[RMDB]
RNA sequence: GGGAACGACUCGAGUAGAGUCGAAAAGGCAGACAGAAAGUCUGUCCACGAAUAGCGAAUUUCGGGAGUAAAGCUGACUUAGCAACAAGAGUCAGUUUAACCGACUAAUGUAGCUAGUCAUAGCAGCAGAUACAUACAAUUUCGAUUGUAUGUAUCUAAAAGAAACAACAACAACAAC
Reactivity to DMS in 0.01 (KOAc 150mM, MgCl2 10mM, bicine 150mM(pH8.5), 24C), signal-to-noise 9, nucleotides 027 to 126: g000g010c000a000g010a010c010a150g020a130a120a110g010u000c000u010g000u010c000c060a080c130g000a040a040u000a020g010c020g000a160a080u010u000u000c010g000g000g000a130g010u020a080a040a020g010c000u000g010a010c000u000u010a150g000c210a100a120c300a070a100g000a010g000u000c000a000g010u000u000u010a070a110c020c020g000a080c300u010a030a040u010g000u030a190g000c000u000a010g000u000c040a110u030a100g010c140a090g000c190
Reactivity to 2A3 in 0.01 (KOAc 150mM, MgCl2 10mM, bicine 150mM(pH8.5), 24C), signal-to-noise 9, nucleotides 027 to 126: g000g000c000a000g000a010c000a010g280a160a130a010g010u000c000u000g000u000c000c020a050c030g040a050a040u010a010g000c000g030a030a030u010u020u020c000g000g010g030a130g150u200a080a070a010g010c000u000g000a000c000u030u060a040g090c070a070a080c020a100a120g000a000g030u000c000a000g000u000u000u010a010a010c000c010g000a000c040u080a040a070u070g020u030a010g000c000u000a010g040u040c020a050u060a110g040c050a010g020c010
Structure probing data (DMS and 2A3) for a 177-nucleotide construct. The reactions ran in a buffer of 150 mM KOAc, 10 mM MgCl2 and 150 mM bicine (pH 8.5), at 24 C. The 2A3 profile rests on 38,383 reads. 2A3 adducts were read by reverse transcription with SuperScript II with manganese.